[RMDB]
RNA sequence: GGGAACGACUCGAGUAGAGUCGAAAAUCAUGCACGUUCGCGUGCAUGAAAAGGCGGCGAGUAUCGCUCAGCGGCGCGCUACAGCGCGCAGCGCACCUGGAAAAAGAUGAAUCUUCGGAUUCAUCAACUUGACUCAAUGGUUCGCCAUUGAGUCAAGAAAAGAAACAACAACAACAAC
Reactivity to 2A3 in 0.01 (KOAc 150mM, MgCl2 10mM, bicine 150mM(pH8.5), 24C), signal-to-noise 1, nucleotides 027 to 126: u040c000a010u000g000c000a020c000g010u050u040c150g000c020g040u000g000c020a020u000g000a000a000a010a020g070g020c030g000g010c010g040a100g110u130a100u270c060g020c020u060c070a040g000c000g040g000c000g040c000g000c000u140a120c040a110g000c040g000c020g000c000a000g020c000g000c000a000c000c010u050g080g030a060a090a010a010a090g000a010u000g010a000a010u010c010u010u130c260g030g000a000u000u010c020a000u000c010a000a020
Reactivity to DMS in 0.01 (KOAc 150mM, MgCl2 10mM, bicine 150mM(pH8.5), 24C), signal-to-noise 2, nucleotides 027 to 126: u000c010a000u010g000c000a000c000g040u000u030c190g000c000g050u000g010c000a010u000g000a000a010a080a120g000g020c100g000g020c000g000a150g040u000a040u010c030g020c000u000c110a120g020c020g010g010c030g030c000g000c020u000a110c300a190g000c000g000c020g040c000a020g010c020g000c150a050c030c000u010g000g000a070a080a060a150a120g010a010u000g000a020a010u000c000u010u030c200g030g000a010u000u010c000a010u000c000a020a040

Chemical mapping of a 177-nucleotide RNA with 2A3 and DMS. For DMS, 1,082 sequencing reads were counted. The 2A3 profile rests on 1,623 reads. Reactivities are rounded to 0.1 and cut off at 0 and 3. 2A3 adducts were read by reverse transcription with SuperScript II with manganese.